[RMDB]
RNA sequence: GGGAACGACUCGAGUAGAGUCGAAAAGAUAUGGAUGGUCAUGUUUAAGCGAUGAAAUCGGAAACGAUGGAGCUUAGUGACAUGAGCCAUCCUAAGUCAAACGUGGUAGAGUUCGCUCUACCACGAAGCACUACACUAACUUCGGUUAGUGUAGUGCAAAAGAAACAACAACAACAAC
Reactivity to 2A3 in 0.01 (KOAc 150mM, MgCl2 10mM, bicine 150mM(pH8.5), 24C), signal-to-noise 2, nucleotides 027 to 126: g050a020u100a010u140g000g000a000u010g010g010u000c010a020u020g030u040u120u110a030a030g050c220g080a300u050g020a050a070a000u000c000g040g020a070a020a000c020g000a010u020g010g020a030g030c000u020u040a050g090u170g200a000c000a000u000g010a010g090c010c010a010u020c000c000u010a030a010g010u030c080a110a050a130c020g000u010g030g020u020a000g010a020g030u050u120c270g020c120u020c000u000a000c050c000a000c000g000a000a000
Reactivity to DMS in 0.01 (KOAc 150mM, MgCl2 10mM, bicine 150mM(pH8.5), 24C), signal-to-noise 2, nucleotides 027 to 126: g000a040u010a300u000g010g000a040u000g000g030u000c000a000u000g010u010u000u000a000a020g010c010g000a090u010g000a040a050a020u000c010g010g000a120a110a160c000g010a000u000g010g000a080g010c000u000u010a030g000u010g020a000c010a000u000g000a080g010c000c010a000u000c000c010u000a010a110g010u000c020a070a120a220c010g000u000g030g020u000a000g010a020g030u000u000c220g000c000u000c000u000a020c000c000a000c010g000a010a100